This 177-nucleotide RNA was probed chemically with 2A3 and DMS. Conditions: 150 mM KOAc, 10 mM MgCl2 and 150 mM bicine (pH 8.5), 24 C. The data come from the RNA Mapping Database (RMDB), library OK1LIB.
[RMDB]
RNA sequence: GGGAACGACUCGAGUAGAGUCGAAAAUGGCUUAUAAAGUUGCUAUUCACUGCUGCAUUCAUUGGCUGCGUGAACGUUGCAGCAACCUCCUCUUUUGUUCUACCUCGGAGGUUUGGGUUGAUGACCCCACUGCACCCAAUUUCGAUUGGGUGCAGUGAAAAGAAACAACAACAACAAC
Reactivity to 2A3 in 0.01 (KOAc 150mM, MgCl2 10mM, bicine 150mM(pH8.5), 24C), signal-to-noise 4, nucleotides 027 to 126: u040g050g030c040u140u050a040u070a210a150a020g050u060u020g020c000u050a080u030u010c020a010c040u170g000c010u030g000c010a020u070u120c030a050u050u300g120g010c020u010g000c000g000u010g030a030a030c070g120u120u100g000c020a020g000c000a000a040c000c010u070c020c030u050c070u020u180u060u080g150u110u060c050u110a060c000c040u030c040g000g050a030g030g000u010u050u050g040g000g010u010u040g070a130u050g100a080c000c000c000
Reactivity to DMS in 0.01 (KOAc 150mM, MgCl2 10mM, bicine 150mM(pH8.5), 24C), signal-to-noise 3, nucleotides 027 to 126: u000g000g020c060u000u000a100u020a090a060a150g000u000u000g000c000u000a120u000u000c020a100c040u020g030c030u000g000c020a060u010u010c180a100u010u020g000g000c040u010g020c010g020u000g000a030a070c250g010u020u000g000c020a000g000c020a040a030c000c020u000c020c000u010c080u000u020u010u040g010u020u020c080u000a070c090c070u030c220g020g020a020g010g000u020u000u010g000g030g030u010u000g000a130u030g010a260c050c010c020